[RMDB]
RNA sequence: GGGAACGACUCGAGUAGAGUCGAAAAGAUAUGGAGCUAGGAAAUGAUCUCUCAUCGUACUCGGAAACGAGUACGUGCGAUCACUUCCUUGGACCUCCUAAGUCAAAGUUGCACUUCGGUGCAACAAGUUUGAGCUUGUGUUCGCACAAGCUCAAACAAAAGAAACAACAACAACAAC
Reactivity to DMS in 0.01 (KOAc 150mM, MgCl2 10mM, bicine 150mM(pH8.5), 24C), signal-to-noise 2, nucleotides 027 to 126: g020a080u020a300u020g000g000a010g040c030u000a010g010g000a010a010a010u000g000a020u020c020u010c100u020c080a050u000c010g040u000a000c000u000c020g000g000a100a070a130c010g000a020g010u000a000c000g010u000g000c300g000a050u000c000a020c050u000u000c000c000u000u000g030g000a050c280c000u030c000c000u000a040a070g000u000c080a040a070a130g000u020u000g030c000a020c000u000u000c250g030g030u000g000c000a000a000c030a060a070

This 177-nucleotide RNA was probed chemically with DMS. Conditions: 150 mM KOAc, 10 mM MgCl2 and 150 mM bicine (pH 8.5), 24 C. Reactivities are rounded to 0.1 and cut off at 0 and 3. For DMS the reverse transcriptase was MarathonRT.